Conditions: 150 mM KOAc, 10 mM MgCl2 and 150 mM bicine (pH 8.5), 24 C. This 207-nucleotide RNA was probed chemically with DMS and 2A3. In probing experiments dimethyl sulfate is read out at A N1 and C N3, which are open when not base-paired. For DMS, 3,101 sequencing reads were counted. For 2A3, 2,210 sequencing reads were counted. It was measured as part of the RMDB library OK3TST. For 2A3 the reverse transcriptase was SuperScript II with manganese. For DMS the reverse transcriptase was MarathonRT.
[RMDB]
RNA sequence: GGGAACGACUCGAGUAGAGUCGAAAAGAAGUCGACUUCCUUCGAAGUCUCGAAGGACUGAGAGACUAGCUGACUCUGACUAGGAGACUAGUCCUGACUAGUCAGCUCUAGAGGAUCAGCUGAAGAGGAAGUCUCCUAGCUCUGAUCGACUGAUCAGCAUCAGCGCAUUAUUCGUAAUGCGCUGAUGAAAAGAAACAACAACAACAAC
Reactivity to DMS in 0.01 (KOAc 150mM, MgCl2 10mM, bicine 150mM(pH8.5), 24C), signal-to-noise 3, nucleotides 027 to 156: g010a100a050g020u000c020g020a040c010u000u030c000c000u010u000c030g010a170a250g040u000c020u000c050g030a200a110g000g020a090c120u000g010a300g000a300g020a070c010u000a030g010c010u010g010a040c040u000c030u000g020a130c050u020a010g000g010a280g000a130c000u000a020g000u000c090c090u000g010a110c000u000a080g020u000c010a100g000c070u010c030u000a040g010a300g020g000a080u000c010a020g020c040u000g020a200a070g000a070g000g020a030a080g040u000c000u000c020c010u000a130g010c110u000c010u000g030a080u010c010g000a100c020u000g020a050u000c000a080g030
Reactivity to 2A3 in 0.01 (KOAc 150mM, MgCl2 10mM, bicine 150mM(pH8.5), 24C), signal-to-noise 3, nucleotides 027 to 156: g140a040a000g080u090c030g010a020c000u000u000c010c000u030u030c040g100a090a020g030u050c000u000c020g040a100a080g210g110a110c170u190g020a040g000a000g000a100c000u030a000g030c000u000g010a080c130u020c020u060g100a300c010u050a010g000g020a060g010a010c000u000a000g020u030c060c070u100g070a070c010u000a000g030u000c010a100g030c030u030c000u030a010g000a010g000g020a030u020c010a000g000c010u030g030a070a010g000a030g020g010a010a010g000u010c010u000c000c000u020a030g020c040u000c000u040g000a000u010c010g170a200c160u230g000a000u000c000a000g000